An RNA of 177 nucleotides, treated with 2A3 and DMS and read out base by base. The reactions ran in a buffer of 150 mM KOAc, 10 mM MgCl2 and 150 mM bicine (pH 8.5), at 24 C. DMS adducts were read by reverse transcription with MarathonRT. Values cover nucleotides 27 to 126. It was measured as part of the RMDB library OK2TST.

RNA sequence: GGGAACGACUCGAGUAGAGUCGAAAAGGCGGGCGACUUCCUCCUAGCGCGCGCGAGUGUGUCACUGGCGGCCCUGCGCAACAGCGAUGUCAUCCAGCUUCUGAGCCAGGUCAUCGAGGACUUAGUCCGCUUACUCAGGUUUCGACCUGAGUAAGCGAAAAGAAACAACAACAACAAC
Reactivity to 2A3 in 0.01 (KOAc 150mM, MgCl2 10mM, bicine 150mM(pH8.5), 24C), signal-to-noise 1, nucleotides 027 to 126: g000g020c020g000g030g000c060g030a060c040u100u030c020c020u000c020c010u030a020g020c030g000c010g020c000g000c030g010a020g020u100g000u110g040u100c010a010c060u050g100g000c040g000g070c010c030c030u070g000c000g000c000a020a140c000a050g080c010g040a010u010g050u100c010a040u020c050c010a020g040c030u090u050c050u140g100a000g010c000c020a050g000g050u030c020a050u050c040g070a030g000g040a010c000u040u030a030g080u040c040
Reactivity to DMS in 0.01 (KOAc 150mM, MgCl2 10mM, bicine 150mM(pH8.5), 24C), signal-to-noise 2, nucleotides 027 to 126: g090g010c030g010g000g020c030g000a070c140u010u000c020c000u000c040c110u010a110g010c040g020c080g030c040g020c020g010a060g010u000g010u040g010u010c050a060c020u000g020g030c050g010g000c080c020c060u000g000c040g030c020a130a070c170a070g020c130g000a070u000g020u010c060a120u000c060c070a090g000c030u000u000c120u010g010a130g020c020c050a110g000g010u000c040a020u000c100g020a090g020g000a070c090u010u000a140g010u000c030